[RMDB]
RNA sequence: GGGAACGACUCGAGUAGAGUCGAAAAAUUAUGUUGCUAUUGCCCAUGGCACAUUCUUUUGAACAUAUUUAGUGGCAGAUGUUUGUCCAGUGAUUUUAGUCAAUACUUUACAUAAUUUGGAAUCAUCUUAUGAGUAAAACUUUAUCAUUUACCUGGAGUCUUAGUCACUCUUCGGAGUGACUAAGACAAAAGAAACAACAACAACAAC
Reactivity to 2A3 in 0.01 (KOAc 150mM, MgCl2 10mM, bicine 150mM(pH8.5), 24C), signal-to-noise 1, nucleotides 027 to 156: a000u140u130a120u040g080u130u120g000c030u010a010u010u150g000c000c000c000a010u020g000g000c000a000c000a020u030u080c070u060u030u060u120g160a190a080c030a170u230a210u140u190u020a100g070u100g040g000c020a030g020a180u110g050u080u150u160g030u160c000c060a010g000u010g050a010u090u000u110u300a030g000u040c010a050a110u000a040c020u080u180u120a070c000a000u110a000a040u050u050u020g010g210a160a080u230c000a000u000c010u030u030a010u010g000a010g020u130a000a130a000a020c000u070u020u050a050u100c010a040u050u070u220a110c020c000u020g020g000a050
The record gives the reactivity of an RNA of 207 nucleotides to 2A3. The reactions ran in a buffer of 150 mM KOAc, 10 mM MgCl2 and 150 mM bicine (pH 8.5), at 24 C. For 2A3, 331 sequencing reads were counted. 2A3 adducts were read by reverse transcription with SuperScript II with manganese. Reactivities are given for positions 27 through 156.